The record gives the reactivity of an RNA of 207 nucleotides to 2A3.
It was measured as part of the RMDB library OK3TST.
For 2A3 the reverse transcriptase was SuperScript II with manganese.
RNA sequence: GGGAACGACUCGAGUAGAGUCGAAAAUCUGACGACAGAAGACUGUCCAGGAAGGCUGGCUCACCCCAGCUCUCCCGUACCUGCUCCUUAGCUCGUGUGUGUAUAUGACAGGGUGACUGGGGUGGGGUCUCUCACCAGCGGGCUGUGGGGGCCCUCAACUCGUAUCACUGUUCGCAGUGAUACGAGUAAAAGAAACAACAACAACAAC
Reactivity to 2A3 in 0.01 (KOAc 150mM, MgCl2 10mM, bicine 150mM(pH8.5), 24C), signal-to-noise 1, nucleotides 027 to 156: u060c020u030g080a050c040g030a000c050a020g100a190a020g150a280c020u010g010u040c010c000a020g030g080a080a010g040g030c040u020g020g030c000u000c020a000c000c000c000c000a000g000c040u040c040u000c000c000c000g000u060a130c000c010u060g040c000u050c010c010u080u210a030g020c050u090c100g060u060g020u010g020u020g030u100a040u030a040u300g120a070c040a100g000g010g020u000g010a030c010u020g010g020g050g060u000g000g000g000g010u000c040u000c010u020c010a050c000c000a030g020c060g010g020g000c010u010g010u120g050g020g010g010g000c000c070c000u010c040a010